RNA sequence: GGGAACGACUCGAGUAGAGUCGAAAAACUAUUUGUUCUAUAGCAAACAAACCCGAAACACAGCAUAUAUUUGUUAUAUAUGCUUUGUGGGACACAGCUGUUAGGACAUGAGCCAUCAGGGUCCAAACAUAUACGUGGGAUUCGUCCCACGUAUAUGAAAAGAAACAACAACAACAAC
Reactivity to DMS in 0.01 (KOAc 150mM, MgCl2 10mM, bicine 150mM(pH8.5), 24C), signal-to-noise 6, nucleotides 027 to 126: a170c060u020a090u020u000u000g010u000u000c010u000a040u010a020g000c010a110a080a110c230a040a100a120c000c000c000g010a110a140a060c030a010c040a010g000c000a000u000a000u000a000u000u020u040g000u030u040a050u000a010u000a000u000g010c000u000u010u010g030u020g000g000g000a090c110a110c260a060g000c010u000g000u000u000a010g000g000a000c010a010u010g010a050g010c050c060a090u020c070a080g000g010g000u020c020c040a080a090a230
Reactivity to 2A3 in 0.01 (KOAc 150mM, MgCl2 10mM, bicine 150mM(pH8.5), 24C), signal-to-noise 9, nucleotides 027 to 126: a010c090u110a110u120u040u040g010u020u000c010u020a030u020a020g010c040a090a050a120c040a050a120a070c010c020c010g070a050a080a000c020a000c010a000g010c010a000u010a000u010a020u020u100u130g230u300u020a020u030a000u010a000u000g000c000u000u010u000g010u010g010g010g020a030c060a000c010a130g020c000u010g040u130u040a020g010g020a000c020a040u070g020a010g030c040c020a080u090c080a080g060g030g070u020c010c020a030a060a030
Source: RMDB library OK1LIB, as collected in RNAgym. An RNA of 177 nucleotides, treated with DMS and 2A3 and read out base by base. Values are in units of 0.01, from 0 to 300, in steps of 10. DMS adducts were read by reverse transcription with MarathonRT.